[RMDB]
RNA sequence: GGGAACGACUCGAGUAGAGUCGAAAAGUCACUCAAUUCGUUGAGUGACAUACUGGGCCCGGAGUCGCGCAAGAAAGGGUCAAGACGCGCUCGAUAAAAUAACUAGUUGCCAGUUCGCUGGCAACAAUAGUAACAGUUUCUUCGGAAACUGUUACUAAAAAGAAACAACAACAACAAC
Reactivity to 2A3 in 0.01 (KOAc 150mM, MgCl2 10mM, bicine 150mM(pH8.5), 24C), signal-to-noise 3, nucleotides 027 to 126: g010u000c000a000c000u000c000a000a040u140u080c160g040u060u020g000a000g000u000g000a000c000a000u020a010c000u060g050g060g060c000c000c000g030g000a040g020u230c020g000c020g000c090a090a060g090a220a170a040g180g020g050u090c060a000a020g070a050c000g010c000g010c020u020c030g090a150u130a130a140a010a030u170a110a030c080u060a040g000u000u000g000c010c000a000g000u020u050c220g010c050u000g020g000c000a000a000c000a000a000
Reactivity to DMS in 0.01 (KOAc 150mM, MgCl2 10mM, bicine 150mM(pH8.5), 24C), signal-to-noise 2, nucleotides 027 to 126: g000u000c020a020c000u000c000a010a030u000u010c150g030u000u010g000a010g020u010g000a000c010a020u010a020c100u010g010g020g010c030c000c020g010g010a050g010u010c050g060c020g040c040a120a140g010a050a210a090g010g000g000u000c060a110a090g000a080c020g000c030g010c010u010c020g000a130u010a040a040a070a040u010a050a080c170u010a090g010u000u000g020c000c000a010g000u000u010c200g010c010u010g000g010c010a000a000c000a030a070
Source: RMDB library M2PK50, as collected in RNAgym. Chemical mapping of a 177-nucleotide RNA with 2A3 and DMS. For 2A3 the reverse transcriptase was SuperScript II with manganese. Values are in units of 0.01, from 0 to 300, in steps of 10. Values cover nucleotides 27 to 126. Conditions: 150 mM KOAc, 10 mM MgCl2 and 150 mM bicine (pH 8.5), 24 C.